[RMDB]
RNA sequence: GGGAACGACUCGAGUAGAGUCGAAAAUUACAUAAGUCUAACACCUUGUUUCGGACUAACAAGGGCGCAUGGAGGAUGGCCGGACCUCCAUAGAUAGACGUCCGAGAACCAGCCGAAAGGAAAAAGACAUGCUGAUGGGAUUCGUCCCAUCAGCAUGAAAAGAAACAACAACAACAAC
Reactivity to DMS in 0.01 (KOAc 150mM, MgCl2 10mM, bicine 150mM(pH8.5), 24C), signal-to-noise 2, nucleotides 027 to 126: u030u010a160c140a110u040a080a100g020u010c000u000a110a120c250a080c020c000u000u040g000u020u000u020c010g000g030a080c090u010a010a100c040a010a130g010g010g020c030g010c100a070u020g000g010a030g000g000a120u030g000g000c010c010g020g000a120c000c000u020c000c000a000u000a050g010a220u010a080g030a140c000g000u010c000c000g000a100g020a030a110c170c150a090g040c000c000g000a030a030a040g000g000a050a060a050a100a120g000a120
Reactivity to 2A3 in 0.01 (KOAc 150mM, MgCl2 10mM, bicine 150mM(pH8.5), 24C), signal-to-noise 2, nucleotides 027 to 126: u110u110a020c050a040u180a220a010g010u060c070u020a080a000c040a050c020c020u010u020g080u230u040u090c050g070g030a100c080u080a160a000c020a020a020g000g040g000c000g000c050a000u010g020g000a000g010g000a020u160g040g020c000c000g000g000a050c000c000u000c010c000a000u000a010g030a020u010a000g030a010c020g000u010c000c000g000a000g070a060a020c070c080a000g000c000c000g000a040a000a000g020g010a080a150a060a000a000g040a010

The record gives the reactivity of an RNA of 177 nucleotides to DMS and 2A3. The 2A3 profile rests on 1,202 reads. DMS adducts were read by reverse transcription with MarathonRT.